[RMDB]
An RNA of 177 nucleotides, treated with DMS and 2A3 and read out base by base. For DMS the reverse transcriptase was MarathonRT. For 2A3, 3,927 sequencing reads were counted.

RNA sequence: GGGAACGACUCGAGUAGAGUCGAAAACGAGGACUGAACUUCCAAUCGCAGUACUUGGAAAUGGCGGGGAAAUGAAUGACAAGAGACUUUGGGUCCAGUUCAUGAACCAGUCUCCAAAACUCGUCUCCACUCUCUUGAUGUUCGCAUCAAGAGAGUGAAAAGAAACAACAACAACAAC
Reactivity to DMS in 0.01 (KOAc 150mM, MgCl2 10mM, bicine 150mM(pH8.5), 24C), signal-to-noise 3, nucleotides 027 to 126: c050g000a020g020g000a100c030u000g010a130a090c140u010u010c140c110a070a060u000c170g000c030a050g000u010a060c170u000u000g020g020a070a050a080u000g030g010c060g010g020g000g000a060a110a040u010g000a050a020u000g020a130c190a080a110g010a070g000a010c020u010u000u000g000g030g020u010c000c030a110g000u000u000c110a050u000g010a150a130c020c010a040g000u000c000u020c010c020a050a020a100a150c050u000c020g020u000c060u010c040
Reactivity to 2A3 in 0.01 (KOAc 150mM, MgCl2 10mM, bicine 150mM(pH8.5), 24C), signal-to-noise 4, nucleotides 027 to 126: c020g000a010g010g070a020c050u040g030a170a160c040u210u040c060c010a050a110u190c120g020c080a030g020u060a080c060u050u070g000g040a050a090a150u160g020g000c030g000g000g010g020a080a080a040u070g020a010a040u100g030a050c090a160a090g080a000g010a090c040u140u230u270g220g050g010u000c000c010a010g020u080u090c050a040u070g020a020a020c020c010a020g000u010c010u010c010c000a000a070a030a050c010u000c030g020u000c010u000c010